[RMDB]
RNA sequence: GGGAACGACUCGAGUAGAGUCGAAAACGCCUACGGCUUCAUGCAGACCGUUGCGUCCUACCAGGUCCAGCUCAGCGUCGAGAAAUCGCCAUGACCUGGCGCGUCGGCCUGGUUGUCUUUGUGCUCCUGGUGAUGGUCUGGACGGCCGGCUGGUGGGCCGUCAUCUCAUUUUCGAAUGAGAUGACGGAAAAGAAACAACAACAACAAC
Reactivity to 2A3 in 0.01 (KOAc 150mM, MgCl2 10mM, bicine 150mM(pH8.5), 24C), signal-to-noise 6, nucleotides 027 to 156: c010g020c010c010u030a020c010g010g000c020u060u050c130a090u190g100c020a020g010a050c010c010g040u040u080g050c040g080u110c000c020u010a010c010c000a000g000g020u030c020c030a020g010c040u030c090a030g000c050g110u030c020g030a030g080a080a170a050u160c030g010c050c040a080u250g030a080c020c030u010g000g010c030g010c010g110u060c020g000g000c000c000u000g020g000u030u050g020u030c030u050u210u140g080u130g050c040u050c040c040u050g030g000u020g040a040u060g000g010u000c010u020g030g100a030c030g020g000c010c000g040g060c040u030g040g000u030g010g050g030
Reactivity to DMS in 0.01 (KOAc 150mM, MgCl2 10mM, bicine 150mM(pH8.5), 24C), signal-to-noise 2, nucleotides 027 to 156: c050g020c010c010u000a070c040g020g010c030u000u020c080a060u010g010c060a080g020a020c010c020g010u000u000g030c070g010u000c040c010u010a090c010c000a040g000g010u000c010c030a120g020c020u000c050a070g020c090g070u000c030g000a100g010a050a150a110u000c060g010c020c060a120u020g020a170c170c110u000g000g010c000g020c120g020u010c070g010g000c010c020u000g000g020u000u000g010u000c050u000u000u010g030u010g020c030u000c030c010u010g010g010u010g010a090u010g020g020u010c020u000g000g010a040c060g010g040c010c020g000g020c030u000g000g010u000g000g000g010